[RMDB]
RNA sequence: GGGAACGACUCGAGUAGAGUCGAAAAGAUAUGGAGGGAGGCACCCAUCGGAGGAGUCGGAAACGACUCUCCCCACCCGAUGGUCGUGCCAUCGAUCUCCUAAGUCAAAGAACGGUUCGCCGUUCAACGAUAAUUAAGAGUUCGCUCUUAAUUAUCGAAAAGAAACAACAACAACAAC
Reactivity to 2A3 in 0.01 (KOAc 150mM, MgCl2 10mM, bicine 150mM(pH8.5), 24C), signal-to-noise 8, nucleotides 027 to 126: g030a040u110a050u210g000g000a000g010g010g000a020g000g000c000a010c010c000c000a010u000c000g020g000a030g010g000a000g000u000c000g010g020a030a060a040c010g010a010c000u000c010u010c010c000c000c010a020c000c000c010g000a000u000g020g040u150c110g000u010g000c000c000a040u160c000g000a020u000c000u000c000c000u020a140a040g050u020c060a140a030a110g010a010a000c010g010g050u070u120c300g040c100c010g000u000u000c010a000a020
Reactivity to DMS in 0.01 (KOAc 150mM, MgCl2 10mM, bicine 150mM(pH8.5), 24C), signal-to-noise 9, nucleotides 027 to 126: g010a050u000a300u000g000g000a030g000g000g010a040g020g020c010a010c020c000c000a010u000c000g010g010a160g010g000a010g010u000c000g000g000a090a100a210c010g010a010c000u000c000u000c030c010c010c020a300c070c010c000g000a010u000g000g010u000c240g020u000g010c000c000a040u000c130g000a060u010c000u000c000c000u000a040a080g010u000c040a100a120a090g000a020a010c010g000g000u000u010c220g020c000c000g010u000u000c000a050a140
Source: RMDB library TTRDEL, as collected in RNAgym. Structure probing data (2A3 and DMS) for a 177-nucleotide construct. The RNA was probed in 150 mM KOAc, 10 mM MgCl2 and 150 mM bicine (pH 8.5) at 24 C. Values are in units of 0.01, from 0 to 300, in steps of 10. 2A3 adducts were read by reverse transcription with SuperScript II with manganese.